[RMDB]
RNA sequence: GGGAACGACUCGAGUAGAGUCGAAAAUUAACAUCUACAAAUCAUAACUUUUCUUAAUGUUUAUUCUUUGAGAAUACAUAGUAGUUGCACAUAUUUAAGGCAUACAUGUGAUAUUUUGAUAUGUGUGUAUCACGUGUAAUGAUCAAAUCAGAGUAAAACCAUCACGUCGUUUCGACGACGUGAUGGUAAAAGAAACAACAACAACAAC
Reactivity to 2A3 in 0.01 (KOAc 150mM, MgCl2 10mM, bicine 150mM(pH8.5), 24C), signal-to-noise 1, nucleotides 027 to 156: u160u120a000a140c040a070u070c020u270a040c040a000a230a140u300c130a050u230a070a300c000u050u060u060u130c020u030u230a100a050u040g130u170u100u130a020u070u000c020u080u000u280g020a000g000a010a010u050a120c070a020u070a110g050u000a000g020u130u140g110c000a000c090a040u140a140u170u100u110a010a010g050g000c070a000u050a040c000a040u090g050u000g020a000u000a090u030u040u120u000g110a040u020a090u140g200u070g000u050g000u030a000u050c000a000c000g000u000g000u000a180a220u110g040a000u020c000a060a180a060u110c050a000g070a000g210u050a000a070a000
Source information: This 207-nucleotide RNA was probed chemically with 2A3. Source: RMDB library OK3TST, as collected in RNAgym. As a SHAPE reagent, 2A3 marks flexible, mostly unpaired nucleotides at the ribose 2'-OH. For 2A3, 240 sequencing reads were counted. Conditions: 150 mM KOAc, 10 mM MgCl2 and 150 mM bicine (pH 8.5), 24 C. For 2A3 the reverse transcriptase was SuperScript II with manganese.